The data come from the RNA Mapping Database (RMDB), library OK2TRN. The record gives the reactivity of an RNA of 177 nucleotides to 2A3 and DMS. Values cover nucleotides 27 to 126. For DMS, 4,120 sequencing reads were counted. The RNA was probed in 150 mM KOAc, 10 mM MgCl2 and 150 mM bicine (pH 8.5) at 24 C.
[RMDB]
RNA sequence: GGGAACGACUCGAGUAGAGUCGAAAAUCAAGAAGAAGGCGUGGUGAUUUAUGUCCCUGAAGAAUUUCAGGUGAGUGAGCCGAUAUGCAUACGUCAUAUAUGUUCUCCGACUUCUAGGAGUGAUAAGACUAGGUAUCCAGUUCGCUGGAUACCUAGUAAAAGAAACAACAACAACAAC
Reactivity to 2A3 in 0.01 (KOAc 150mM, MgCl2 10mM, bicine 150mM(pH8.5), 24C), signal-to-noise 1, nucleotides 027 to 126: u040c000a050a000g030a030a010g030a040a030g060g000c040g000u060g040g020u100g090a140u050u000u110a070u150g150u030c020c000c010u000g000a030a060g110a100a140u000u080u040c010a000g010g060u140g070a080g040u090g020a010g020c000c000g010a010u030a020u080g030c070a080u040a190c090g050u030c090a020u040a030u010a020u200g090u090u010c010u020c010c020g030a040c020u060u000c000u070a050g000g040a050g000u060g030a050u050a060a050g040
Reactivity to DMS in 0.01 (KOAc 150mM, MgCl2 10mM, bicine 150mM(pH8.5), 24C), signal-to-noise 4, nucleotides 027 to 126: u000c020a080a080g010a100a060g010a070a090g010g010c050g010u010g020g020u020g000a080u010u000u010a050u010g010u000c060c010c000u010g010a030a030g020a120a080u010u000u010c010a010g010g000u010g020a120g000u010g000a070g030c080c050g000a080u010a050u000g000c020a100u010a100c160g010u000c030a010u020a070u010a060u010g000u000u000c020u000c020c010g020a120c050u000u000c020u010a130g000g000a090g010u000g000a050u010a110a110g010